[RMDB]
RNA sequence: GGGAACGACUCGAGUAGAGUCGAAAAUACCGUCUUCUCCCCGACUGUUUCAAUCCAUAGCUUCACGUUGUGUAGCGUAGGUGGAAGGUAUCGUGUGGUGUAUAAACACCACAUAGUCUCUUAGGGGUCAAGCUGAUAAACUUCGGUUUAUCAGCAACGUAUGCAGAUGUUUCGACAUCUGCAUACGAAAAGAAACAACAACAACAAC
Reactivity to DMS in 0.01 (KOAc 150mM, MgCl2 10mM, bicine 150mM(pH8.5), 24C), signal-to-noise 2, nucleotides 027 to 156: u000a090c020c000g010u000c040u000u000c040u000c010c010c010c000g010a100c070u010g000u000u010u000c050a100a090u000c000c030a090u000a230g030c020u000u000c030a020c020g050u020u010g030u010g040u000a020g020c020g050u000a050g050g020u010g000g040a070a040g030g010u010a030u000c030g090u000g020u000g010g060u000g000u000a200u000a170a140a090c010a020c000c000a010c000a010u000a040g030u000c030u000c010u010u000a100g080g010g020g010u000c030a080a140g010c000u000g010a040u000a000a000a000c020u010u000c300g040g010u000u010u010a000u000c010a000g010c030a010a010
Reactivity to 2A3 in 0.01 (KOAc 150mM, MgCl2 10mM, bicine 150mM(pH8.5), 24C), signal-to-noise 5, nucleotides 027 to 156: u080a020c010c010g060u040c060u180u020c060u090c010c000c000c000g040a040c020u060g060u040u070u090c060a090a080u030c020c010a030u030a140g000c000u040u050c010a030c050g300u300u270g010u090g020u060a020g010c030g110u130a090g080g000u020g020g010a020a010g030g010u060a050u110c050g000u010g000u000g000g000u000g060u020a090u120a250a230a000c000a010c000c000a000c000a000u010a000g020u000c010u010c000u090u120a050g000g020g010g000u030c060a060a030g000c000u000g000a000u000a000a010a000c010u020u070c170g060g000u010u000u000a000u000c000a000g000c000a000a000
This 207-nucleotide RNA was probed chemically with DMS and 2A3. The reactions ran in a buffer of 150 mM KOAc, 10 mM MgCl2 and 150 mM bicine (pH 8.5), at 24 C. It was measured as part of the RMDB library M2RFPK. DMS adducts were read by reverse transcription with MarathonRT.